[RMDB]
RNA sequence: GGGAACGACUCGAGUAGAGUCGAAAAUUAAAGGAGUGAAGGUACAAGCGACAGUGUCCAACUGAGGUAAUCGACCACUGCCAGUACCAAGACGUGCGUAGUCAAGUCAAAGGCAGAACGCAAAAAACUCAAAGUCUAGGUUCGCCUAGACUUUGAGAAAAGAAACAACAACAACAAC
Reactivity to 2A3 in 0.01 (KOAc 150mM, MgCl2 10mM, bicine 150mM(pH8.5), 24C), signal-to-noise 1, nucleotides 027 to 126: u110u070a080a060a070g080g060a060g000u080g090a140a060g000g000u030a030c020a140a040g070c050g160a140c020a000g030u000g020u110c030c020a040a050c050u050g050a050g130g000u100a060a060u040c030g120a080c020c050a000c020u020g010c020c000a010g040u020a000c000c020a010a000g100a010c030g040u050g050c040g090u140a020g020u080c040a030a000g090u060c050a030a000a010g000g010c030a050g000a050a000c020g000c060a000a020a040a040a040a030
Reactivity to DMS in 0.01 (KOAc 150mM, MgCl2 10mM, bicine 150mM(pH8.5), 24C), signal-to-noise 2, nucleotides 027 to 126: u000u010a040a060a130g000g020a070g010u000g010a140a140g000g020u010a010c020a130a070g030c050g040a020c030a020g070u010g010u000c030c070a080a120c110u000g010a060g000g010u000a010a140u000c100g010a080c130c080a100c040u000g000c000c020a110g000u020a060c050c050a060a150g000a030c050g000u010g000c040g030u000a100g010u010c050a050a080g000u020c210a050a150a110g000g010c000a010g000a080a050c060g010c090a000a030a020a030a090a050
Description:
Chemical mapping of a 177-nucleotide RNA with 2A3 and DMS. For DMS, 988 sequencing reads were counted. DMS adducts were read by reverse transcription with MarathonRT. Reactivities are rounded to 0.1 and cut off at 0 and 3.